[RMDB]
RNA sequence: GGGAACGACUCGAGUAGAGUCGAAAAGUUAGUUCGCUAACGCAUUCACCUUUGUGAGUCUGGAGACUAUCGGCCUGGCUCCUCCCAUUGGGAGGAGAACUACCAGGGAAGUAGUCGUUGAAAGACUCACUCUGGUCGGACUUCAGUUCGCUGAAAACCCUGCCAAUUAGUUCGCUAAUUGGCAGGGAAAAGAAACAACAACAACAAC
Reactivity to 2A3 in 0.01 (KOAc 150mM, MgCl2 10mM, bicine 150mM(pH8.5), 24C), signal-to-noise 2, nucleotides 027 to 156: g020u050u080a050g000u030u020c130g020c080u020a030a000c020g010c040a030u040u090c010a010c020c000u000u010u000g000u010g000a000g000u000c000u000g010g010a010g020a010c010u000a000u100c010g300g060c010c000u010g020g010c000u000c030c010u000c000c030c020a300u300u300g000g000g000a000g000g010a000g000a000a020c030u110a090c020c000a000g000g000g000a090a000g000u010a000g000u000c040g010u170u000g000a000a020a000g000a000c000u000c000a000c010u000c000u000g000g030u040c100g010g040a050c000u040u010c070a060g010u020u040c080g030c030u090g160a100a300a090a090
Annotation
The record gives the reactivity of an RNA of 207 nucleotides to 2A3. For 2A3 the reverse transcriptase was SuperScript II with manganese. Conditions: 150 mM KOAc, 10 mM MgCl2 and 150 mM bicine (pH 8.5), 24 C.